[RMDB]
RNA sequence: GGGAACGACUCGAGUAGAGUCGAAAAGAUAUGGACUUGUGGGAGCUCAGGGUCGGAAACGACCUGUUCGAGCGAGGAUCACAGUCCUAAGUCAAAACCUAAGGAUGUCUUCGGACAUCCUUAGGAACUUUAAAGCUCUCUUCGGAGAGCUUUAAAGAAAAGAAACAACAACAACAAC
Reactivity to 2A3 in 0.01 (KOAc 150mM, MgCl2 10mM, bicine 150mM(pH8.5), 24C), signal-to-noise 1, nucleotides 027 to 126: g030a010u060a060u140g000g000a010c060u250u290g010u010g030g000g000a000g000c010u030c070a040g000g010g020u000c000g050g000a050a020a010c010g020a000c040c000u060g100u080u090c120g000a000g020c000g040a050g000g030a010u020c000a020c000a030g000u000c000c020u000a070a000g050u010c030a000a000a120a300c010c010u010a000a020g020g010a000u010g010u000c000u040u170c300g020g000a040c000a010u010c000c010u010u010a000g000g000a000a000
Reactivity to DMS in 0.01 (KOAc 150mM, MgCl2 10mM, bicine 150mM(pH8.5), 24C), signal-to-noise 2, nucleotides 027 to 126: g000a020u010a300u010g000g000a000c000u000u020g040u000g010g000g010a060g010c000u010c010a180g010g010g010u000c000g010g010a070a070a120c000g010a010c000c000u000g010u010u000c190g010a020g030c000g030a030g010g010a060u010c010a000c010a020g000u000c000c000u000a010a080g000u000c020a100a070a150a130c010c000u020a010a020g010g000a020u000g000u000c000u000u010c180g010g000a000c000a000u000c000c000u000u000a000g010g010a010a030
Chemical mapping of a 177-nucleotide RNA with 2A3 and DMS. For 2A3 the reverse transcriptase was SuperScript II with manganese. For DMS, 2,197 sequencing reads were counted. The RNA was probed in 150 mM KOAc, 10 mM MgCl2 and 150 mM bicine (pH 8.5) at 24 C. The 2A3 profile rests on 1,558 reads. Values cover nucleotides 27 to 126.